[RMDB]
RNA sequence: GGGAACGACUCGAGUAGAGUCGAAAAUUGUAUACGGAAAUUGUUUACACUCCCAUUGCAACACCUGAUGGAUCUGUAAUCAAGAAAUUUAAAGGGAACAACAGUGGGCAACCAUCAACCGUCGUUGAGCCCAGUUACUUUUCGAAGUAACUGGGCUAAAAGAAACAACAACAACAAC
Reactivity to DMS in 0.01 (KOAc 150mM, MgCl2 10mM, bicine 150mM(pH8.5), 24C), signal-to-noise 1, nucleotides 027 to 126: u000u000g000u070a100u000a000c000g000g000a300a010a300u200u030g000u000u000u000a030c050a190c300u000c000c000c000a030u090u090g040c090a260a000c120a000c180c000u060g000a220u000g000g000a000u000c000u000g000u120a070a130u000c050a030a110g000a060a160a030u030u020u000a070a020a050g000g000g000a020a250c060a120a110c000a050g090u000g030g000g000c300a000a000c010c000a000u030c070a150a000c090c090g000u000c220g000u000u000g000
Reactivity to 2A3 in 0.01 (KOAc 150mM, MgCl2 10mM, bicine 150mM(pH8.5), 24C), signal-to-noise 1, nucleotides 027 to 126: u000u000g000u070a000u000a050c050g000g270a080a040a030u120u240g050u130u100u000a060c030a040c010u020c150c000c050a030u000u060g000c180a210a000c000a000c110c000u090g060a010u010g010g000a000u000c040u090g100u010a080a080u130c090a000a010g070a130a110a000u100u100u230a140a200a000g140g000g010a000a030c100a110a000c000a110g000u000g000g000g000c000a040a040c000c000a060u130c160a040a010c000c120g000u040c000g010u000u070g090